[RMDB]
RNA sequence: GGGAACGACUCGAGUAGAGUCGAAAACGCGAGGUUAUCCUCCCGGUCAUCAUGCGGAAGGGUGCCGGUCUUGCAGUUCUCGGCGAUGCUGUGUUCGAUCCCGAGACCAACAAGAUGGUUGUCAGCUUCAACACGGAGCCCGGACGAAACAUCGCGGCCGCUUACGUUGAUUCGUCAACGUAAGCGGAAAAGAAACAACAACAACAAC
Reactivity to 2A3 in 0.01 (KOAc 150mM, MgCl2 10mM, bicine 150mM(pH8.5), 24C), signal-to-noise 2, nucleotides 027 to 156: c030g000c020g010a010g020g010u070u210a160u230c000c010u020c000c010c020g020g050u080c050a150u020c020a030u180g070c020g020g010a030a020g050g000g040u030g000c010c010g080g010u030c030u040u000g020c040a070g000u120u010c010u000c000g000g010c080g010a030u160g170c110u110g070u080g080u240u230c010g000a020u000c000c000c000g000a030g020a010c040c010a040a060c030a030a080g010a010u030g010g040u150u130g040u080c010a080g030c030u020u000c010a130a130c040a050c270g030g020a010g050c000c050c020g150g000a000c010g040a020a040a020c000a000u000c010g000c010g060g020